[RMDB]
RNA sequence: GGGAACGACUCGAGUAGAGUCGAAAAGAUAUGGAUAUGGUUUAUUCAUCCGUAUGGACAUGCGUCGUGGUCGGAAACGACCAUAGACGCAACAGCCAUCACGGAUGAAUAAACCAUAUCCUAAGUCGCCCUCUAAGAAGUUCGCUUCUUAGAGGGCAAAAGAAACAACAACAACAAC
Reactivity to DMS in 0.01 (KOAc 150mM, MgCl2 10mM, bicine 150mM(pH8.5), 24C), signal-to-noise 1, nucleotides 027 to 126: g010a090u000a300u020g010g010a020u000a000u000g000g020u000u010u010a000u020u000c000a020u000c000c000g010u000a030u000g020g000a040c140a270u000g000c000g030u000c000g060u000g000g000u000c000g020g000a130a090a260c000g020a010c000c010a010u000a030g020a020c000g000c000a020a030c290a210g010c020c000a010u000c230a010c000g000g000a000u000g010a000a020u010a000a000a000c000c000a000u000a000u000c000c010u000a010a040g040u000c150